RNA sequence: GGGAACGACUCGAGUAGAGUCGAAAAAGUGGCAUGAUCUCUGCUCACUGCAACCUCUGCCUCCCGGGUUCAAGAGAUUCUCCUGCUUCAGCUUCCAGAGUAGCUGGGACUACAGGCAGGCACCAUCAGGCUCGGCUAAUUUUUAAAUUUUUUGGUAAGCAUGGAAAACAUUCGUGUUUUCCAUGCUAAAAGAAACAACAACAACAAC
Reactivity to 2A3 in 0.01 (KOAc 150mM, MgCl2 10mM, bicine 150mM(pH8.5), 24C), signal-to-noise 1, nucleotides 027 to 156: a000g050u020g010g000c070a080u090g020a100u100c000u000c040u040g020c130u100c080a110c010u080g000c010a100a150c000c020u100c090u050g050c010c010u010c000c030c030g000g010g000u110u110c050a030a000g020a010g010a060u040u060c000u020c040c000u000g050c000u010u040c020a030g060c070u010u020c010c000a040g020a190g180u170a030g120c060u020g010g000g010a000c000u030a020c080a000g050g000c020a000g000g000c000a020c000c020a030u100c010a010g060g000c010u020c030g000g000c050u090a000a080u120u020u030u050u230a130a150a120u210u220u100u020u000u110g080g000u070a030

Annotation: The record gives the reactivity of an RNA of 207 nucleotides to 2A3. Source: RMDB library OK3TST, as collected in RNAgym.